[RMDB]
RNA sequence: GGGAACGACUCGAGUAGAGUCGAAAAGAUGAACCCAUGGCAGGGCUAAACCAGAGUGGUACCGCUUGCCUAGGCUUGCCUCGGAGCCAAGAAGGAGGGCUCCCGGGGCGCCGCAAGGCUUGCCUGCGACAGCAGUGCUGUUCGCAGCACUGCUGUCAAAAGAAACAACAACAACAAC
Reactivity to 2A3 in 0.01 (KOAc 150mM, MgCl2 10mM, bicine 150mM(pH8.5), 24C), signal-to-noise 1, nucleotides 027 to 126: g070a020u130g040a080a120c020c000c000a020u090g060g000c000a010g000g060g000c030u090a110a060a050c020c010a070g050a000g270u150g030g020u090a040c010c040g020c040u020u080g000c010c010u040a100g000g000c030u060u280g020c010c000u000c030g010g020a000g020c000c020a020a030g130a080a020g060g070a040g070g030g000c020u060c050c040c000g020g010g010g030c000g000c000c010g000c060a070a000g000g010c000u000u030g000c000c030u040g050c030
Reactivity to DMS in 0.01 (KOAc 150mM, MgCl2 10mM, bicine 150mM(pH8.5), 24C), signal-to-noise 1, nucleotides 027 to 126: g010a130u010g010a110a170c030c010c040a130u010g000g010c030a070g030g010g040c040u000a060a100a080c060c060a080g000a100g030u000g030g000u010a110c120c110g010c040u010u010g000c000c030u010a090g010g000c050u000u000g060c010c000u010c000g010g010a070g030c000c010a020a080g010a150a140g000g010a170g010g040g010c000u000c110c030c030g040g010g010g010c010g000c010c000g000c170a080a040g010g000c020u000u000g030c020c000u000g000c190